[RMDB]
RNA sequence: GGGAACGACUCGAGUAGAGUCGAAAAAAAAGGAGACAGAAGAUUGAAGCCUUUGCCAGCCAUUCUUUCCCUUUUUGCUUCCAAACUCCUCAACUGGGAACCUUCAUAUGUGCAGUAUUUAUAUUGGUCUAAAUGACUCCUUCGGGAGUCAUUUAGAAAAAGAAACAACAACAACAAC
Reactivity to DMS in 0.01 (KOAc 150mM, MgCl2 10mM, bicine 150mM(pH8.5), 24C), signal-to-noise 2, nucleotides 027 to 126: a040a010a070a020g000g010a080g000a070c130a090g020a050a000g000a070u030u010g020a110a150g010c070c020u000u010u030g030c020c060a090g000c050c030a130u000u000c040u000u000u000c020c000c000u010u000u000u000u020g010c050u000u000c010c010a060a100a100c100u050c010c050u000c080a050a130c080u000g000g000g000a130a110c110c010u000u000c040a090u010a070u000g000u030g000c040a030g010u030a040u030u040u020a080u030a100u020u020g000g020
Reactivity to 2A3 in 0.01 (KOAc 150mM, MgCl2 10mM, bicine 150mM(pH8.5), 24C), signal-to-noise 2, nucleotides 027 to 126: a000a000a000a000g120g010a060g020a000c020a020g140a040a000g030a050u080u190g040a180a000g000c000c000u070u040u020g080c080c040a000g000c000c000a020u030u010c000u000u020u050c000c000c000u030u020u000u080u050g040c030u120u020c030c000a050a060a070c070u050c000c030u060c020a120a090c070u030g070g010g000a030a010c040c020u030u080c030a020u050a070u170g070u080g040c010a010g060u100a190u150u220u010a160u020a040u020u240g050g000